[RMDB]
RNA sequence: GGGAACGACUCGAGUAGAGUCGAAAAUGAUCAUUCGUGAUCAGAAACGUCCUAAGUCUUGGAGUGCCUGGGAGCACGAUAAGUGUCGGAAACGACACUUUUGACGUGCGACGAUCAGGCCUCCAAGAUAUGGAAUAGCCGUUCAUUCGUGAACGAAUAAUGUGCAUGUAUUCGUACAUGCACAUUAAAAAGAAACAACAACAACAAC
Reactivity to DMS in 0.01 (KOAc 150mM, MgCl2 10mM, bicine 150mM(pH8.5), 24C), signal-to-noise 5, nucleotides 027 to 156: u000g020a010u000c010a100u000u000c270g030u000g020a020u000c000a060g000a070a080a090c070g000u000c010c020u000a070a300g020u000c000u000u000g010g000a040g020u000g040c000c000u000g010g020g040a200g010c000a010c000g010a140u000a020a010g010u000g000u000c010g010g010a210a140a270c010g010a020c000a000c000u000u000u010u000g010a240c090g030u000g010c010g010a130c130g020a120u000c010a000g010g020c010c000u000c000c000a000a010g030a010u000a080u000g000g010a070a070u010a100g020c040c020g000u000u000c010a110u000u000c210g010u000g000a030a030c020g000a120a180
Reactivity to 2A3 in 0.01 (KOAc 150mM, MgCl2 10mM, bicine 150mM(pH8.5), 24C), signal-to-noise 9, nucleotides 027 to 156: u050g010a000u010c010a020u050u160c260g120u040g010a000u000c000a000g120a040a150a020c110g080u020c010c010u050a120a040g020u000c000u010u000g010g010a010g000u300g030c000c000u000g000g000g010a020g000c000a000c000g000a000u010a020a000g000u000g010u000c000g010g060a090a070a050c010g000a000c000a010c020u020u020u030u080g180a080c010g000u000g020c020g050a240c010g000a070u010c000a000g000g000c000c000u000c000c000a000a000g000a000u000a000u010g000g020a030a060u050a120g140c080c010g000u010u010c010a030u050u120c190g150u050g040a010a010c010g020a020a030

Structure probing data (DMS and 2A3) for a 207-nucleotide construct.
DMS adducts were read by reverse transcription with MarathonRT.
2A3 is a SHAPE reagent: it acylates the 2'-hydroxyl of flexible nucleotides of all four kinds.
For DMS, 22,333 sequencing reads were counted.
The reactions ran in a buffer of 150 mM KOAc, 10 mM MgCl2 and 150 mM bicine (pH 8.5), at 24 C.